Chemical mapping of a 207-nucleotide RNA with DMS and 2A3. For 2A3, 18,877 sequencing reads were counted.
[RMDB]
RNA sequence: GGGAACGACUCGAGUAGAGUCGAAAACAUCAAACACGGGCCUUUUCGGAGGGAGGUAUUUAAUGUUGCGAGAUUGGCACGCCAUCCGUAUAACGGAACAUUCGAAACAAGGGGAAAGAAGAGAAUUGUGGUAGAGGGAAACCAUUUCAAAGGAGAGACUCAACAUUACAUUCGUGUAAUGUUGAGUAAAAGAAACAACAACAACAAC
Reactivity to DMS in 0.01 (KOAc 150mM, MgCl2 10mM, bicine 150mM(pH8.5), 24C), signal-to-noise 4, nucleotides 027 to 156: c040a100u010c060a060a060a080c060a090c070g010g030g040c010c010u000u010u010u000c070g000g010a080g000g030g000a040g040g010u000a080u000u000u000a110a090u010g020u000u010g020c030g010a120g010a190u000u010g020g030c020a110c060g020c010c030a110u010c020c010g050u000a150u010a120a080c020g010g010a050a060c040a160u010u010c040g010a110a070a050c110a070a100g000g000g000g000a050a020a090g010a030a060g010a070g000a050a090u010u000g040u010g020g010u000a050g010a100g030g000g000a070a070a060c020c040a130u000u000u000c060a050a050a100g010g010a070g010a180g000
Reactivity to 2A3 in 0.01 (KOAc 150mM, MgCl2 10mM, bicine 150mM(pH8.5), 24C), signal-to-noise 9, nucleotides 027 to 156: c010a050u110c050a040a060a040c070a030c100g040g030g010c020c020u070u100u100u130c060g040g010a030g020g020g010a020g030g000u070a150u060u190u090a120a070u120g040u060u060g030c030g010a090g000a140u050u100g050g000c050a020c090g020c020c020a040u020c010c000g040u090a080u090a270a040c020g010g000a020a020c020a070u070u120c050g040a040a030a040c030a060a050g020g000g010g030a010a060a030g030a030a010g030a010g020a050a100u100u090g040u050g040g010u050a030g020a040g040g000g010a030a030a020c010c010a050u060u140u140c080a060a050a020g040g000a050g000a000g010
Conditions: 150 mM KOAc, 10 mM MgCl2 and 150 mM bicine (pH 8.5), 24 C.